[RMDB]
RNA sequence: GGGAACGACUCGAGUAGAGUCGAAAAUUUAGAUGAUAUCUUACAACAGGCUAAUAAGUCUGUUGGUAUUAUAUCUAUGCCUUUGGGAUAUGUGUCUCAUGGUUUAGACUUAAUGCAAGCAGGGAGUUAACUAUUGAGUUCGCUCAAUAGAAAAGAAACAACAACAACAAC
Reactivity to 2A3 in 0.01 (KOAc 150mM, MgCl2 10mM, bicine 150mM(pH8.5), 24C), signal-to-noise 9, nucleotides 027 to 129: u140u120u060a060g020a040u100g040a020u040a020u080c030u040u050a010c000a000a000c000a000g000g000c000u050a110a070u170a300a080g010u000c000u000g000u000u010g010g000u010a000u020u000a010u000a000u000c010u010a020u040g030c000c000u080u090u090g020g000g000a030u060a080u260g300u110g020u040c000u000c010a040u030g020g000u020u020u030a030g010a010c000u020u050a030a020u070g010c040a020a030g010c010a020g040g020g020a060g040u070u080a080a060
Reactivity to DMS in 0.01 (KOAc 150mM, MgCl2 10mM, bicine 150mM(pH8.5), 24C), signal-to-noise 9, nucleotides 027 to 129: u030u030u030a060g020a110u030g020a060u020a150u000c060u010u010a150c020a000a000c010a040g020g040c010u000a110a080u040a100a060g010u020c000u020g010u020u010g000g000u030a000u000u020a020u000a060u010c000u010a060u000g000c010c030u020u020u020g030g000g030a030u000a050u060g040u020g030u000c000u020c010a050u020g000g000u000u000u020a040g000a080c050u000u000a020a020u050g040c050a060a040g020c090a030g000g030g010a070g010u000u040a060a130